[RMDB]
RNA sequence: GGGAACGACUCGAGUAGAGUCGAAAACGACUUUUCGAUUUUGGAUAGGUUCAGACUUCGUGUGUCCUUUAUGUUUUUUUCUGAAACGUAAUGAAGGGGUGCCAAAACGAAGGGUGGUUCGAAGCUGCGAUAAGAUUUCUUUCGAGAAAUUUUAUCGAAAAGAAACAACAACAACAAC
Reactivity to 2A3 in 0.01 (KOAc 150mM, MgCl2 10mM, bicine 150mM(pH8.5), 24C), signal-to-noise 8, nucleotides 027 to 126: c030g020a020c000u030u030u010u010c030g190a250u020u000u000u070g060g010a070u070a180g110g000u130u110c070a030g040a120c040u080u070c150g080u090g010u030g030u130c000c000u030u020u020a060u040g020u000u010u010u020u000u020u070c100u080g020a010a010a010c020g020u070a040a050u100g090a080a040g050g010g020g020u050g040c000c000a010a030a000a000c010g000a000a010g010g000g000u020g020g000u020u050c060g050a010a020g040c010u010g010
Reactivity to DMS in 0.01 (KOAc 150mM, MgCl2 10mM, bicine 150mM(pH8.5), 24C), signal-to-noise 4, nucleotides 027 to 126: c040g000a040c040u010u010u010u010c000g000a120u000u000u010u010g000g000a070u020a050g010g010u010u020c080a080g000a100c030u010u000c050g020u030g010u010g010u010c020c030u000u000u000a020u010g000u000u000u000u010u010u050u060c210u040g000a010a020a000c020g020u000a030a030u030g010a060a040g000g000g000g020u010g010c040c020a000a020a030a030c020g000a020a010g000g010g010u000g010g020u000u000c060g000a080a090g020c060u010g000